[RMDB]
RNA sequence: GGGAACGACUCGAGUAGAGUCGAAAAGUGCCUGAACGCCGCCGGUCACCUCCUUCAGGAAGACUUCGAAGCUGGACACCUUCUUCUCAUGGAUGACGACGCGGCGCCCCGCGUAGAAGGGGUCCCCGUUGCGGUACACAAGCACGCUCUUCACGAAGCUAUAUUAAUACUUCGGUAUUAAUAUAGCAAAAGAAACAACAACAACAAC
Reactivity to DMS in 0.01 (KOAc 150mM, MgCl2 10mM, bicine 150mM(pH8.5), 24C), signal-to-noise 2, nucleotides 027 to 156: g020u000g010c010c000u010g010a070a140c080g010c000c030g030c020c100g010g000u000c030a170c020c040u020c030c130u010u010c100a110g050g020a090a120g010a030c060u010u000c030g030a080a090g050c060u010g030g000a080c030a050c040c010u010u000c010u000u010c020u010c080a180u010g030g010a090u000g030a100c050g030a090c100g010c030g010g010c090g010c040c000c040c030g030c050g000u000a040g020a040a040g020g010g040g020u000c040c030c020c000g020u010u010g010c030g020g040u000a120c260a200c050a060a030g030c000a060c040g030c210u000c040u000u000c020a130c070g000a130a250
Reactivity to 2A3 in 0.01 (KOAc 150mM, MgCl2 10mM, bicine 150mM(pH8.5), 24C), signal-to-noise 5, nucleotides 027 to 156: g000u000g010c000c010u010g020a060a010c100g020c000c000g000c020c020g010g010u030c030a070c010c010u110c020c020u100u100c060a060g070g040a110a100g060a060c050u100u120c220g070a100a050g070c130u120g030g040a040c020a050c030c010u050u030c000u100u030c050u040c070a110u220g080g010a150u180g050a050c030g010a010c010g030c000g000g030c040g050c030c020c000c000g000c010g020u040a030g000a030a000g010g010g000g000u010c020c020c000c000g060u050u120g010c010g000g000u060a040c010a000c000a070a020g000c000a000c010g030c020u030c000u130u150c080a070c180g070a050a000